An RNA of 177 nucleotides, treated with 2A3 and DMS and read out base by base.
For 2A3 the reverse transcriptase was SuperScript II with manganese.
The data come from the RNA Mapping Database (RMDB), library TTRDEL.
The DMS profile rests on 7,119 reads.
RNA sequence: GGGAACGACUCGAGUAGAGUCGAAAAGAGUGUUCGCACUCAAAAAAGAUAUGGAGAACUACUUAGUGUUCAUCGGAAACGAUGACUGCACGUAAGCUCCUAAGUCAAAAAUCCGCUUCGGCGGAAAGUCUAAGUAAUUCUUCGGAAUUACUUAGACAAAAGAAACAACAACAACAAC
Reactivity to 2A3 in 0.01 (KOAc 150mM, MgCl2 10mM, bicine 150mM(pH8.5), 24C), signal-to-noise 4, nucleotides 027 to 126: g010a000g020u060g020u080u200c230g070c040a020c000u000c000a070a100a070a050a000a010g070a020u100a040u130g020g010a010g010a060a030c030u100a010c020u270u100a090g020u010g030u080u030c000a010u000c010g040g010a060a050a040c010g010a000u000g000a010c040u060g010c010a010c050g100u040a000a010g010c000u000c000c010u020a160a030g020u010c030a010a050a030a050a300u010c000c010g000c030u050u070c220g190g020c010g000g020a030a070a010
Reactivity to DMS in 0.01 (KOAc 150mM, MgCl2 10mM, bicine 150mM(pH8.5), 24C), signal-to-noise 7, nucleotides 027 to 126: g000a030g030u000g010u000u010c260g020c010a010c020u020c000a000a050a090a090a090a090g000a040u000a300u010g000g000a020g000a080a040c030u000a190c020u010u000a100g010u000g000u000u010c000a010u010c010g000g000a090a090a130c010g010a010u000g000a030c300u010g010c020a030c080g000u000a020a030g000c010u000c000c000u000a040a160g000u020c020a030a090a060a090a100u000c000c000g010c000u000u010c190g040g010c000g020g000a000a020a050
The reactions ran in a buffer of 150 mM KOAc, 10 mM MgCl2 and 150 mM bicine (pH 8.5), at 24 C.